[RMDB]
RNA sequence: GGGAACGACUCGAGUAGAGUCGAAAAACCGCCAGAGGUCAUUUACGUCAGUUAAGCCCUGUCGGCGUCGCGACGCCAGGGUCGAAAAUCUAGCGAAUCGCCGUAGUGCAGCGUGUUCGUCCGCGUCGCUGCGGUUAAAUCAAAAGACUGGACUAAAGACAUUUAUCUUGUUCGCAAGAUAAAUGUCAAAAGAAACAACAACAACAAC
Reactivity to 2A3 in 0.01 (KOAc 150mM, MgCl2 10mM, bicine 150mM(pH8.5), 24C), signal-to-noise 2, nucleotides 027 to 156: a000c040c010g080c070c020a130g060a070g100g040u130c080a080u110u200u210a070c080g050u060c060a130g040u070u080a040a000g000c000c000c000u000g010u010c010g000g030c000g040u020c000g000c000g020a000c000g030c020c000a000g000g030g010u020c010g020a000a020a010a010u150c170u220a010g020c000g000a030a000u010c010g000c000c020g000u020a000g000u000g010c030a000g010c010g000u010g020u010u000c000g010u010c010c010g000c000g010u030c000g010c010u010g010c010g010g000u010u010a010a000a010u160c080a020a010a010a020g010a000c070u120g010g010a000c010u030a000a090a050
Record summary: Source: RMDB library RSTRND, as collected in RNAgym. The record gives the reactivity of an RNA of 207 nucleotides to 2A3. 2A3 adducts were read by reverse transcription with SuperScript II with manganese. For 2A3, 1,620 sequencing reads were counted. Reactivities are given for positions 27 through 156.